[RMDB]
RNA sequence: GGGAACGACUCGAGUAGAGUCGAAAAGCUGAAUAUGGCCUGCGCUUAAUUGCGCGGCUAAUUCUUGAUUUUCUGCUAUCAGUUUUCUUUCUCUCAUCCUAAACACAAUGGAGUUUUUUCUCUAUGAACUACUUCCCUGGAGAGCUCGUCUCUCCAGCCACAUGGAAACGUUCGCGUUUCCAUGUGGAAAAGAAACAACAACAACAAC
Reactivity to 2A3 in 0.01 (KOAc 150mM, MgCl2 10mM, bicine 150mM(pH8.5), 24C), signal-to-noise 2, nucleotides 027 to 156: g030c020u050g010a030a020u100a140u140g020g000c040c100u200g010c000g000c020u060u130a080a050u300u130g000c000g010c010g030g000c000u010a000a000u010u020c030u040u140g060a110u020u060u050u040c030u110g060c020u050a070u080c040a100g040u040u020u110u160c000u000u050u030c030u040c010u020c040a140u110c000c030u090a130a150a040c050a020c000a060a220u120g000g000a000g040u020u040u020u000u170u000c060u000c000u040a100u120g010a040a030c020u050a040c030u060u040c040c000c000u000g000g000a000g000a000g010c030u120c150g290u100c030u000c010u000c000c000a000g000

The record gives the reactivity of an RNA of 207 nucleotides to 2A3. The RNA was probed in 150 mM KOAc, 10 mM MgCl2 and 150 mM bicine (pH 8.5) at 24 C. 2A3 adducts were read by reverse transcription with SuperScript II with manganese.